[RMDB]
RNA sequence: GGGAACGACUCGAGUAGAGUCGAAAAAGGAGUCAAAUACGUCCUCAAUGAGACCACGAACUGGCUGUGGGCUUUUUUAGCCCGCGAUAAGAAACCCAGGAUGUGUUCCCGGGAGGAAUUUAUUGGAAUUACGAGACACGUUCGCGUGUCUCGUAAUAAAAGAAACAACAACAACAAC
Reactivity to DMS in 0.01 (KOAc 150mM, MgCl2 10mM, bicine 150mM(pH8.5), 24C), signal-to-noise 2, nucleotides 027 to 126: a000g000g050a110g000u000c000a100a140a020u010a040c230g000u000c020c010u010c010a170a040u070g000a300g010a030c050c010a020c000g010a080a300c040u030g000g030c050u030g030u000g000g000g060c000u000u010u030u000u040u020a000g010c000c000c010g020c000g060a100u000a130a050g020a170a130a090c300c000c000a030g000g000a170u050g000u050g020u000u000c030c000c040g090g000g000a010g000g000a040a050u110u030u050a060u000u000g000g000a120
Reactivity to 2A3 in 0.01 (KOAc 150mM, MgCl2 10mM, bicine 150mM(pH8.5), 24C), signal-to-noise 2, nucleotides 027 to 126: a000g160g030a120g000u080c010a020a020a030u030a040c040g020u000c000c000u000c000a010a060u030g000a000g010a050c000c000a010c020g190a270a010c000u000g040g050c010u030g000u040g030g000g010c000u150u110u100u090u120u230a000g010c000c000c000g040c000g040a080u140a120a070g150a100a060a010c010c000c000a000g000g000a070u230g000u000g040u010u020c040c000c000g050g140g000a030g040g040a000a070u160u060u050a170u140u110g090g110a140
An RNA of 177 nucleotides, treated with DMS and 2A3 and read out base by base.
Conditions: 150 mM KOAc, 10 mM MgCl2 and 150 mM bicine (pH 8.5), 24 C.
For DMS, 1,555 sequencing reads were counted.
In probing experiments dimethyl sulfate is read out at A N1 and C N3, which are open when not base-paired.